[RMDB]
RNA sequence: GGGAACGACUCGAGUAGAGUCGAAAACGUCCCCACAUAGCAGAGCCCCGGACCCCCUUCCAAAGUGACCGGGGGGGUCGCUUGGAACGUAGGGGACCGGUGGAGCCAUGGGAUGCUCCUUCCUAUGCUGUAAUAUUGGGUUCGCCCAAUAUUACAGAAAAGAAACAACAACAACAAC
Reactivity to 2A3 in 0.01 (KOAc 150mM, MgCl2 10mM, bicine 150mM(pH8.5), 24C), signal-to-noise 1, nucleotides 027 to 126: c020g110u050c030c000c010c000a040c000a030u120a010g050c060a030g040a050g150c010c000c000c000g070g000a080c020c020c000c000c000u000u030c030c000a080a130a000g010u030g020a010c010c060g040g010g050g000g000g090g050u000c000g010c000u000u020g010g020a050a040c080g010u140a100g000g020g000g020a000c000c000g000g000u010g000g010a010g000c000c010a130u190g130g000g040a020u100g010c040u060c010c050u070u080c010c000u060a030u140g000
Reactivity to DMS in 0.01 (KOAc 150mM, MgCl2 10mM, bicine 150mM(pH8.5), 24C), signal-to-noise 2, nucleotides 027 to 126: c160g020u010c010c010c000c160a160c110a080u000a060g010c090a130g000a220g030c060c070c010c000g010g000a150c000c000c000c000c040u010u020c040c020a030a060a080g030u000g000a010c020c050g040g000g030g000g000g030g020u000c010g020c000u000u010g000g020a050a040c170g010u010a080g050g010g030g010a010c010c010g000g020u000g010g010a050g020c030c060a160u000g000g010g000a300u000g000c030u010c040c030u000u000c010c010u020a060u000g020
Structure probing data (2A3 and DMS) for a 177-nucleotide construct. For 2A3, 1,806 sequencing reads were counted. Values cover nucleotides 27 to 126. In probing experiments dimethyl sulfate is read out at A N1 and C N3, which are open when not base-paired. Reactivities are rounded to 0.1 and cut off at 0 and 3. DMS adducts were read by reverse transcription with MarathonRT.